[RMDB]
RNA sequence: GGGAACGACUCGAGUAGAGUCGAAAAGCCAAAGACCCUUCCUGGGCCUCUAUCCUCCAAGGCCUGGAGGAGCCUUACCACGCCUUCGUAGAACGCCUCAACAUAGCUCUUGACAAUGGGCUGCCAGGACCAUAGGUAUAUUCGUAUACCUAUGGUCAAAAGAAACAACAACAACAAC
Reactivity to 2A3 in 0.01 (KOAc 150mM, MgCl2 10mM, bicine 150mM(pH8.5), 24C), signal-to-noise 9, nucleotides 027 to 126: g050c010c010a050a040a030g090a080c010c000c000u040u050c030c020u080g010g020g010c020c000u030c010u060a170u040c000c010u000c010c010a070a080g050g010c010c030u010g000g010a020g000g010a010g010c000c010u050u080a050c020c010a040c040g070c000c010u050u070c030g050u050a030g020a120a010c030g030c000c010u040c020a040a060c020a070u150a020g010c010u010c010u050u120g060a060c050a090a170u100g010g020g000c010u020g030c020c020a060g060
Reactivity to DMS in 0.01 (KOAc 150mM, MgCl2 10mM, bicine 150mM(pH8.5), 24C), signal-to-noise 8, nucleotides 027 to 126: g000c040c020a100a090a090g000a070c050c020c010u020u000c020c020u020g020g000g000c030c010u010c090u000a090u010c010c020u020c000c030a140a100g000g000c160c050u020g000g000a040g020g000a070g010c060c020u000u020a110c070c030a070c080g010c020c020u000u020c040g020u020a050g010a070a130c100g000c020c010u010c040a040a080c110a080u020a080g010c030u000c030u020u020g010a100c190a080a080u030g000g000g000c010u000g000c080c070a120g000
Chemical mapping of a 177-nucleotide RNA with 2A3 and DMS.
For 2A3, 41,576 sequencing reads were counted.
Values cover nucleotides 27 to 126.